[RMDB]
RNA sequence: GGGAACGACUCGAGUAGAGUCGAAAAAUGCAGUAUGUUGGAGAAAGUGAAAGAGCAGUGCGUACUGUUUUUCAAAGGGCGAGAGAUUCGUCACCGUGUGUUAUUUUCUUCGACGAAAUUGAUGCACACUAAUGAGCGGUUUCGACCGCUCAUUAGUAAAAGAAACAACAACAACAAC
Reactivity to 2A3 in 0.01 (KOAc 150mM, MgCl2 10mM, bicine 150mM(pH8.5), 24C), signal-to-noise 4, nucleotides 027 to 126: a010u090g000c000a010g000u110a030u250g010u120u140g040g060a080g050a060a040a040g060u140g070a120a090a090g100a020g040c090a010g000u120g080c030g040u050a010c000u030g070u030u000u010u040u100c130a160a140a010g080g010g000c010g000a020g000a030g020a150u090u110c010g030u050c050a050c120c030g010u060g000u020g000u100u020a090u020u010u010u000c020u040u040c000g040a050c100g030a050a050a040u120u170g020a070u040g000c000a030c000
Reactivity to DMS in 0.01 (KOAc 150mM, MgCl2 10mM, bicine 150mM(pH8.5), 24C), signal-to-noise 2, nucleotides 027 to 126: a080u020g000c020a020g030u040a070u040g040u010u020g000g000a050g010a070a030a070g010u010g010a020a090a040g010a050g000c030a040g000u000g000c300g030u000a110c000u000g020u000u000u000u000u040c040a060a120a080g000g000g020c000g000a020g000a220g020a150u030u010c010g000u020c010a060c080c140g000u010g000u040g010u000u010a060u010u000u030u000c000u000u000c160g000a100c080g000a040a080a070u000u050g030a110u030g020c020a030c140
Source: RMDB library OK1LIB, as collected in RNAgym.
This 177-nucleotide RNA was probed chemically with 2A3 and DMS.
The 2A3 profile rests on 1,547 reads.
Conditions: 150 mM KOAc, 10 mM MgCl2 and 150 mM bicine (pH 8.5), 24 C.
2A3 adducts were read by reverse transcription with SuperScript II with manganese.